This 207-nucleotide RNA was probed chemically with 2A3. For 2A3 the reverse transcriptase was SuperScript II with manganese.
[RMDB]
RNA sequence: GGGAACGACUCGAGUAGAGUCGAAAAGAAAGAAAGAAGCGAGCUGGCGCAGCCGCACGGGCAACCGUCAAUCCAGCACUUCACAAGUCUUGUCGUUCUGAAAGGACAUCCAUCAACCCACCGGGAAAAAAGGACUACAGCUUCGGCUGUAGUCCAAUCACAUUUGAAGGUUCGCCUUCAAAUGUGAAAAAGAAACAACAACAACAAC
Reactivity to 2A3 in 0.01 (KOAc 150mM, MgCl2 10mM, bicine 150mM(pH8.5), 24C), signal-to-noise 1, nucleotides 027 to 156: g010a010a040a000g100a010a100a020g020a190a000g010c020g090a010g030c010u010g030g020c030g010c090a040g070c080c090g040c040a020c030g000g030g000c100a110a030c020c000g050u030c020a000a020u040c000c010a000g020c020a050c040u070u100c020a060c010a240a020g060u010c000u040u040g010u050c000g050u120u000c060u050g110a120a050a000g030g000a000c000a080u070c040c000a020u110c010a060a230c000c010c010a040c060c040g070g020g100a040a130a000a000a060a040g020g000a040c000u000a000c000a000g000c000u020u120c190g120g000c040u000g010u000a000g000u000c000c000a000a000